[RMDB]
RNA sequence: GGGAACGACUCGAGUAGAGUCGAAAAGAUAUGGACUUCUUUGAUCUACCGGGACCCAGACAGGUUUAACUCAGUUCGGAAACGAACUGAGUUAAACUCGAGUCCGGGUAGGGAGAAGUCCUAAGUCCUGCAAUAUGUAGUUCGCUACAUAUUGCAGAAAAGAAACAACAACAACAAC
Reactivity to 2A3 in 0.01 (KOAc 150mM, MgCl2 10mM, bicine 150mM(pH8.5), 24C), signal-to-noise 1, nucleotides 027 to 126: g040a000u140a070u180g000g000a020c000u050u090c000u300u300u170g070a080u030c020u020a020c010c010g240g000g030a030c000c000c100a090g140a160c150a050g000g060u020u000u020a010a000c000u000c030a010g010u020u030c020g070g020a210a130a070c050g030a000a000c000u000g000a010g010u010u000a000a010a040c000u000c020g060a020g010u000c010c050g300g010g000u030a000g000g000g010a010g000a000a000g000u000c000c000u010a010a010g030u060c000
Reactivity to DMS in 0.01 (KOAc 150mM, MgCl2 10mM, bicine 150mM(pH8.5), 24C), signal-to-noise 1, nucleotides 027 to 126: g020a100u030a270u000g020g010a010c000u000u000c000u010u000u020g000a050u010c000u000a020c020c010g050g020g020a000c000c040c020a250g030a190c300a210g010g010u000u000u000a000a010c000u000c000a030g000u000u000c000g000g000a080a130a220c000g020a010a010c000u020g000a000g000u000u000a000a000a010c010u000c030g000a060g000u000c010c010g000g010g020u010a000g010g000g010a030g000a020a000g000u000c000c000u010a010a110g000u000c030